[RMDB]
Chemical mapping of a 177-nucleotide RNA with 2A3. Conditions: 150 mM KOAc, 10 mM MgCl2 and 150 mM bicine (pH 8.5), 24 C. It was measured as part of the RMDB library OK1LIB.

RNA sequence: GGGAACGACUCGAGUAGAGUCGAAAACAGCGUUGACCAUGGGCGUGUGGUGUUCACCCGCGCGGCGCUGCCGGCGAUCCGUCCAGUCAAUCACCUCGUGGUCGACGGUCGGGUGAUCGGGCGCACCUCUGCGGGAAGGUUUCGACCUUCCCGCAGAAAAAGAAACAACAACAACAAC
Reactivity to 2A3 in 0.01 (KOAc 150mM, MgCl2 10mM, bicine 150mM(pH8.5), 24C), signal-to-noise 1, nucleotides 027 to 126: c030a040g050c000g030u030u130g020a080c080c000a120u100g000g060g110c030g010u100g060u010g060g090u170g210u140u160c030a020c030c000c000g020c030g000c020g010g000c130g000c050u100g000c020c020g040g000c050g050a030u000c000c000g060u020c000c030a010g000u000c000a020a020u030c000a030c000c100u300c240g060u000g000g000u020c000g000a000c060g000g020u010c000g000g020g030u010g030a140u070c030g030g000g000c010g030c010a030c000c010